Structure probing data (DMS and 2A3) for a 170-nucleotide construct. It was measured as part of the RMDB library 15KLIB.

RNA sequence: GGGAACGACUCGAGUAGAGUCGAAAAGUGGCGCAAUACGUAAAGCUAAAGAUUAUGGUUUUACUGUUUUUGUGUGCACAGACAACUCUGCUAACACUAAAGUUCUUAGGAACAAGGGUGUUGAUUAAAGCUAUACCGUUCGCGGUAUAGAAAAGAAACAACAACAACAAC
Reactivity to DMS in 0.01 (KOAc 150mM, MgCl2 10mM, bicine 150mM(pH8.5), 24C), signal-to-noise 9, nucleotides 027 to 129: g000u000g010g020c010g020c020a040a020u030a040c000g000u000a010a020a010g010c010u030a070a160a200g060a140u060u090a040u080g000g000u030u020u010u010a020c040u030g000u020u050u000u020u010g030u010g000u050g000c000a000c000a060g000a220c290a050a030c010u030c050u030g040c040u010a020a030c070a020c050u020a070a100a140g000u000u010c020u010u070a140g040g020a030a030c030a100a130g000g070g000u000g000u010u000g000a070u030u050a070a090a080g000
Reactivity to 2A3 in 0.01 (KOAc 150mM, MgCl2 10mM, bicine 150mM(pH8.5), 24C), signal-to-noise 9, nucleotides 027 to 129: g000u000g010g000c000g010c000a000a000u010a010c000g000u000a000a000a000g000c020u050a070a170a070g220a160u280u220a190u300g020g030u010u010u000u000a050c080u120g130u110u100u010u060u010g020u000g010u150g100c000a000c000a000g050a020c040a050a040c020u010c020u050g070c030u080a090a010c020a030c080u140a150a090a040g000u000u000c000u050u100a140g060g070a040a020c040a070a110g230g020g000u030g010u010u010g020a070u030u150a140a050a000g020
Description:
Values cover nucleotides 27 to 129.